[RMDB]
RNA sequence: GGGAACGACUCGAGUAGAGUCGAAAAGUGUCGGACUCGCAAGUGCGAAUAUAUUUUAUCCCUAAACAGGGAGUGGAAAGCACGACCUGGAGUGGAAAACACGUCCAUCCCAAAGCGAGAAAUGAAACAUCCUUAUUAUGUUCGCAUAAUAAGGAUGAAAAGAAACAACAACAACAAC
Reactivity to DMS in 0.01 (KOAc 150mM, MgCl2 10mM, bicine 150mM(pH8.5), 24C), signal-to-noise 9, nucleotides 027 to 126: g010u010g030u000c010g010g010a190c010u000c010g010c020a120a110g020u000g000c010g010a090a100u010a100u010a080u010u000u010u010a130u000c000c000c000u010a070a100a130c270a050g010g000g010a050g010u010g010g000a090a100a190g010c010a010c010g000a060c030c030u000g000g000a170g010u000g000g010a100a070a110a130c040a020c040g000u000c010c010a030u000c010c000c000a030a080a110g000c010g000a020g000a150a060a090u010g000a110a100a180
Reactivity to 2A3 in 0.01 (KOAc 150mM, MgCl2 10mM, bicine 150mM(pH8.5), 24C), signal-to-noise 7, nucleotides 027 to 126: g060u070g020u030c020g030g020a080c010u010c010g000c040a110a100g020u010g020c020g090a180a000u090a000u000a060u080u170u110u110a090u050c010c000c000u090a220a260a070c070a080g000g000g010a010g010u050g030g090a130a060a010g060c000a000c010g020a020c000c010u010g000g000a010g000u060g010g050a110a150a080a040c030a010c020g210u010c010c000a030u010c000c010c000a010a010a010g010c030g020a030g060a060a230a110u230g050a050a060a020